An RNA of 177 nucleotides, treated with 2A3 and read out base by base. The reactions ran in a buffer of 150 mM KOAc, 10 mM MgCl2 and 150 mM bicine (pH 8.5), at 24 C. Source: RMDB library RFM100, as collected in RNAgym. The 2A3 profile rests on 455 reads.
[RMDB]
RNA sequence: GGGAACGACUCGAGUAGAGUCGAAAAGUGGCCAGAGCAGAUAUGGAAGCCCAUGAAAUUGAUGAACUGAGAGUUGCUUCCAGUCCAGAGCGCACCAUCUGGAAUUCCAGUCUGAGGUUACAAUUAGCCGGCUUGUACAGUUCGCUGUACAAGCCGGAAAAGAAACAACAACAACAAC
Reactivity to 2A3 in 0.01 (KOAc 150mM, MgCl2 10mM, bicine 150mM(pH8.5), 24C), signal-to-noise 1, nucleotides 027 to 126: g050u020g020g050c010c000a000g000a060g000c110a050g100a000u020a300u060g000g000a010a010g110c000c020c000a030u200g070a000a220a000u090u200g030a110u080g030a110a000c020u020g090a000g000a000g220u170u220g060c030u000u000c000c000a000g000u000c000c000a070g000a040g050c050g000c080a110c040c000a040u000c020u000g000g000a000a000u050u000c000c000a000g040u000c000u050g020a000g020g030u070u060a040c000a080a120u240u010a020g040